The record gives the reactivity of an RNA of 177 nucleotides to DMS.
For DMS, 866 sequencing reads were counted.
DMS adducts were read by reverse transcription with MarathonRT.
RNA sequence: GGGAACGACUCGAGUAGAGUCGAAAAGAUAUGGACUUACCUAGGGAGCUGCGUCGGAAACGACACAGCGACGAUCUAGAAGUCCUAAGUCAAAAGUGACCCGAACAGUUCGCUGUUCGGGUCACAAGUAUGGACAGUACUUCGGUACUGUCCAUACAAAAGAAACAACAACAACAAC
Reactivity to DMS in 0.01 (KOAc 150mM, MgCl2 10mM, bicine 150mM(pH8.5), 24C), signal-to-noise 1, nucleotides 027 to 126: g000a090u010a300u000g000g000a040c000u000u010a090c300c030u000a010g000g000g000a030g010c010u010g010c030g000u010c000g020g000a070a090a160c000g010a030c020a040c000a020g000c010g000a050c300g000a030u000c000u010a010g020a060a020g000u000c000c000u010a040a150g010u000c060a150a030a170a170g010u000g010a020c000c000c000g010a010a000c000a010g000u000u010c180g070c000u040g000u000u000c000g010g020g000u010c000a000c020a020a050